[RMDB]
RNA sequence: GGGAACGACUCGAGUAGAGUCGAAAAGCUGCGGCUAACCAUAGGCAGCGAAGACAUCUCGGUGCCAUCACGGCGAGUUGUCGAUUAGCAGCUUGACUGCCGUUAGGAACUCAGUCUUGCUGCGAAAGGGAAGCUGCUCGUUCGCGAGUAGCUUCCCAAAAGAAACAACAACAACAAC
Reactivity to 2A3 in 0.01 (KOAc 150mM, MgCl2 10mM, bicine 150mM(pH8.5), 24C), signal-to-noise 2, nucleotides 027 to 126: g030c030u030g020c060g090g000c080u090a080a070c060c020a110u080a090g050g040c000a060g000c000g000a040a040g000a010c020a050u020c000u010c020g130g300u100g090c100c060a040u110c040a050c160g050g000c030g090a020g010u000u000g000u020c000g000a010u020u060a000g020c000a000g000c010u000u000g000a000c000u000g030c000c080g020u030u060a060g070g160a020a030c030u000c060a000g010u000c000u000u000g000c000u000g010c000g000a040a000a000
Reactivity to DMS in 0.01 (KOAc 150mM, MgCl2 10mM, bicine 150mM(pH8.5), 24C), signal-to-noise 1, nucleotides 027 to 126: g000c000u010g000c050g000g000c050u000a110a090c300c130a140u030a110g000g000c000a010g000c000g000a040a070g000a060c040a010u010c000u000c000g050g040u040g020c010c120a250u040c140a100c120g000g000c000g000a180g020u000u000g020u000c000g000a170u000u030a060g000c010a000g000c000u000u000g000a010c000u000g000c010c050g000u010u010a080g000g070a300a020c010u010c000a000g000u000c000u000u020g000c000u000g000c020g010a010a030a020
The record gives the reactivity of an RNA of 177 nucleotides to 2A3 and DMS. As a SHAPE reagent, 2A3 marks flexible, mostly unpaired nucleotides at the ribose 2'-OH. Values cover nucleotides 27 to 126. Conditions: 150 mM KOAc, 10 mM MgCl2 and 150 mM bicine (pH 8.5), 24 C.